[RMDB]
RNA sequence: GGGAACGACUCGAGUAGAGUCGAAAAAAACGCUGGGUUUGAAACAGGCAGCAACAGCAAUGAUGCUACCUGAAGCGCGCACGGGUAGUUGAGCUGUUGACCCUGCCUGGAGUACGAACCUGUGCUGAAGCGCGCACGGCAACCGAAAGGUGCGAAAGCACCCUUAGCACUUCGGUGCUAAGGGUGCAAAAGAAACAACAACAACAAC
Reactivity to 2A3 in 0.01 (KOAc 150mM, MgCl2 10mM, bicine 150mM(pH8.5), 24C), signal-to-noise 1, nucleotides 027 to 156: a010a000a000c060g000c040u080g000g000g050u050u020u070g090a120a070a000c000a000g000g000c000a000g000c020a030a000c000a000g010c000a040a300u160g040a060u130g040c000u000a000c000c010u070g030a150a030g010c000g000c010g050c000a010c050g010g010g000u000a010g000u020u130g090a000g000c010u000g010u020u000g040a140c080c000c020u000g000c000c000u000g000g000a000g030u060a040c070g000a000a000c000c000u010g090u060g000c030u050g000a090a010g010c000g000c010g000c020a000c010g040g040c020a070a040c000c000g040a120a040a030g040g000u070g030c040g110a070a040a010
Structure probing data (2A3) for a 207-nucleotide construct. The RNA was probed in 150 mM KOAc, 10 mM MgCl2 and 150 mM bicine (pH 8.5) at 24 C. 2A3 adducts were read by reverse transcription with SuperScript II with manganese.